[RMDB]
The data come from the RNA Mapping Database (RMDB), library M2PK90. Structure probing data (DMS and 2A3) for a 177-nucleotide construct.

RNA sequence: GGGAACGACUCGAGUAGAGUCGAAAAGAAAAGAGCCGCAAGCGCAGAUAUGCGCAAUACCGUAACCGCGGCACGGUACACCGGCAAGCCAUCUAAGACAGCCGGUGAUAGAUGGCAUACAAAAAAACAUAUUUUCUUAGUUCGCUAAGAAAAUAUGAAAAGAAACAACAACAACAAC
Reactivity to DMS in 0.01 (KOAc 150mM, MgCl2 10mM, bicine 150mM(pH8.5), 24C), signal-to-noise 3, nucleotides 027 to 126: g000a120a080a130a170g010a200g030c010c000g030c030a090a130g000c000g010c020a030g010a170u020a090u000g000c000g050c010a160a050u020a030c010c000g010u000a080a090c030c010g000c000g010g050c040a010c000g000g000u000a070c150a050c020c000g000g000c000a110a090g000c010c010a030u010c060u010a060a070g000a060c050a130g000c020c010g000g000u000g000a050u000a060g000a060u000g000g010c040a180u010a090c150a000a000a040a040a060a050a140
Reactivity to 2A3 in 0.01 (KOAc 150mM, MgCl2 10mM, bicine 150mM(pH8.5), 24C), signal-to-noise 1, nucleotides 027 to 126: g100a000a160a010a020g080a030g020c030c000g010c150a220a040g000c020g000c010a010g020a260u250a100u300g000c030g000c000a000a010u040a020c000c000g010u020a080a050c040c050g000c010g000g000c000a000c000g000g010u040a020c020a010c020c000g020g000c030a090a050g000c020c000a030u010c050u120a070a050g130a140c030a040g040c010c000g000g010u000g010a000u020a010g020a000u040g010g030c010a030u120a120c110a020a100a020a020a000a020a000
2A3 adducts were read by reverse transcription with SuperScript II with manganese. The DMS profile rests on 2,437 reads. Conditions: 150 mM KOAc, 10 mM MgCl2 and 150 mM bicine (pH 8.5), 24 C.